[RMDB]
RNA sequence: GGGAACGACUCGAGUAGAGUCGAAAAGAUGAAUCAAUAACUGUUACUACACAAUUGUUAGAUAUAUUUUCCAACCUUUCUCCAGAUUUAAUUGCUGAGAUGUUGUGUCUCAUGAGACUUUGGGGUCCACCCUCCUGGUAUUCGUACCAGGAGGGUGAAAAGAAACAACAACAACAAC
Reactivity to DMS in 0.01 (KOAc 150mM, MgCl2 10mM, bicine 150mM(pH8.5), 24C), signal-to-noise 2, nucleotides 027 to 126: g000a040u000g000a100a000u070c010a040a020u000a030a010c050u000g010u010u030a130c170u020a070c160a040c030a000a060u000u000g000u000u000a030g000a010u000a080u030a030u010u000u010u100c020c030a050a060c100c100u000u000u000c000u020c000c030a010g000a060u010u000u000a040a060u020u010g000c050u000g000a010g000a000u000g010u000u030g010u010g000u000c020u000c040a140u030g010a100g000a070c070u000u010u020g000g000g010g030u000c060
Reactivity to 2A3 in 0.01 (KOAc 150mM, MgCl2 10mM, bicine 150mM(pH8.5), 24C), signal-to-noise 4, nucleotides 027 to 126: g130a060u190g040a020a080u010c030a020a000u030a020a040c040u010g060u060u140a090c100u210a060c070a010c010a100a060u080u000g040u080u110a090g060a010u030a000u030a060u100u060u080u000c010c040a040a080c040c000u090u250u080c010u010c000c000a000g020a070u130u070u300a150a090u290u170g040c070u040g020a030g020a070u090g030u190u100g060u060g000u000c000u020c020a040u110g070a030g020a050c050u120u070u090g050g030g000g010u010c000
Chemical mapping of a 177-nucleotide RNA with DMS and 2A3.